Conditions: 150 mM KOAc, 10 mM MgCl2 and 150 mM bicine (pH 8.5), 24 C. Structure probing data (DMS and 2A3) for a 177-nucleotide construct. For DMS, 16,767 sequencing reads were counted. DMS adducts were read by reverse transcription with MarathonRT. High DMS reactivity at an A or C suggests that its Watson-Crick edge is free. Source: RMDB library OK2TST, as collected in RNAgym.

[RMDB]
RNA sequence: GGGAACGACUCGAGUAGAGUCGAAAAGUGGCCAGCAGCAUGGCGCAGAAGGCAGCUAGGGUGACUCGGCCGCCACCGAUACGGUCGGCGAGCUUGCCGCCAUAUAUUCGGGACAGCGAUCCCAAUAGAUGUACUAUCUGUUCGCAGAUAGUACAUCAAAAGAAACAACAACAACAAC
Reactivity to DMS in 0.01 (KOAc 150mM, MgCl2 10mM, bicine 150mM(pH8.5), 24C), signal-to-noise 9, nucleotides 027 to 126: g020u010g010g020c020c010a050g010c050a080g010c070a070u000g010g010c040g020c060a130g010a160a130g010g010c030a080g020c030u000a090g010g010g000u000g000a110c040u000c100g020g000c010c020g000c020c040a060c060c010g010a090u000a080c140g010g000u010c060g030g000c010g000a120g020c130u010u010g020c030c010g010c020c020a070u010a070u000a090u010u000c050g000g000g000a070c110a090g010c060g000a120u000c000c000c000a090a110u010a090
Reactivity to 2A3 in 0.01 (KOAc 150mM, MgCl2 10mM, bicine 150mM(pH8.5), 24C), signal-to-noise 9, nucleotides 027 to 126: g050u040g020g010c010c010a010g000c000a010g040c030a060u090g050g000c030g000c030a040g080a300a060g170g000c050a040g010c090u070a030g090g140g050u040g050a140c020u020c100g030g010c020c010g020c020c010a030c020c000g050a110u090a210c090g060g070u160c050g020g040c010g010a050g090c040u050u150g000c010c000g000c010c010a040u090a010u000a020u100u070c030g010g000g010a020c040a040g090c060g070a100u020c000c000c000a010a010u110a040